[RMDB]
RNA sequence: GGGAACGACUCGAGUAGAGUCGAAAACAGGGCGUUUCGAUAGGCCCAAUUUACUAUCGAGAUUACAUCGUGGGAGACCACGUAGAGACCGCAACUGCUGGGUCGAUGAACAGCAGAGUUACACCGCGUUUCGUUGCGCGGGAUGAAGCAACGUACACCUAAUCCCAUGAUUCGUCAUGGGAUUAGGAAAAGAAACAACAACAACAAC
Reactivity to DMS in 0.01 (KOAc 150mM, MgCl2 10mM, bicine 150mM(pH8.5), 24C), signal-to-noise 2, nucleotides 027 to 156: c140a150g010g040g080c020g010u010u010u000c010g020a040u000a000g010g040c030c080c060a050a060u000u000u000a140c000u000a010u010c010g020a030g000a180u000u010a130c140a140u000c010g020u000g010g010g020a300g010a230c010c000a000c010g020u000a020g020a140g000a020c010c020g020c020a110a170c000u000g010c000u010g010g020g070u000c000g020a180u000g010a050a050c010a030g000c030a040g020a120g000u000u000a150c070a070c000c010g000c000g000u000u010u000c250g010u000u010g020c010g060c000g060g010g000a020u000g000a190a110g050c030a030a020c030g010u000a070c180a110
Reactivity to 2A3 in 0.01 (KOAc 150mM, MgCl2 10mM, bicine 150mM(pH8.5), 24C), signal-to-noise 2, nucleotides 027 to 156: c010a000g000g000g000c040g020u020u130u000c000g010a000u000a000g000g040c000c000c020a000a030u060u030u000a030c000u000a020u010c010g000a000g000a080u130u200a090c070a030u150c030g010u000g000g000g000a110g060a110c000c010a000c000g010u030a100g030a000g020a030c120c020g070c110a030a050c120u010g000c000u040g000g000g020u000c090g140a090u230g100a080a020c000a000g000c000a000g030a020g120u090u110a040c030a030c040c010g000c000g030u120u150u100c070g040u100u050g000c010g010c000g000g040g000a050u170g070a000a000g030c010a020a000c000g040u020a030c050a020

The data come from the RNA Mapping Database (RMDB), library OK3TST. This 207-nucleotide RNA was probed chemically with DMS and 2A3. Values cover nucleotides 27 to 156. The RNA was probed in 150 mM KOAc, 10 mM MgCl2 and 150 mM bicine (pH 8.5) at 24 C. The DMS profile rests on 3,039 reads.